Chemical mapping of a 177-nucleotide RNA with DMS.
The reactions ran in a buffer of 150 mM KOAc, 10 mM MgCl2 and 150 mM bicine (pH 8.5), at 24 C.
It was measured as part of the RMDB library OK2TST.
For DMS, 466 sequencing reads were counted.
RNA sequence: GGGAACGACUCGAGUAGAGUCGAAAAUACACAAAAUCCGCCUGUAAUCUGGGAAAAGCUUCACGAUCAAGAGCGUUUUAUUCCAUCAAUCUACGGCAAGGAUCGUGCGCAAGGCGAAGGUGACGCAACGCUGCUAUGACUUCGGUCAUAGCAGCGUAAAAGAAACAACAACAACAAC
Reactivity to DMS in 0.01 (KOAc 150mM, MgCl2 10mM, bicine 150mM(pH8.5), 24C), signal-to-noise 1, nucleotides 027 to 126: u000a070c080a020c060a000a120a150a190u000c010c010g070c010c000u010g000u000a060a060u000c180u020g000g000g000a080a020a070a110g000c100u000u000c050a010c030g000a030u000c060a190a150g000a180g030c000g100u000u000u010u020a210u000u000c040c150a070u000c050a060a100u000c080u070a060c030g150g010c000a090a190g010g000a060u000c010g020u010g000c300g010c100a050a060g000g000c000g000a140a080g000g020u000g000a060c100g000c270a100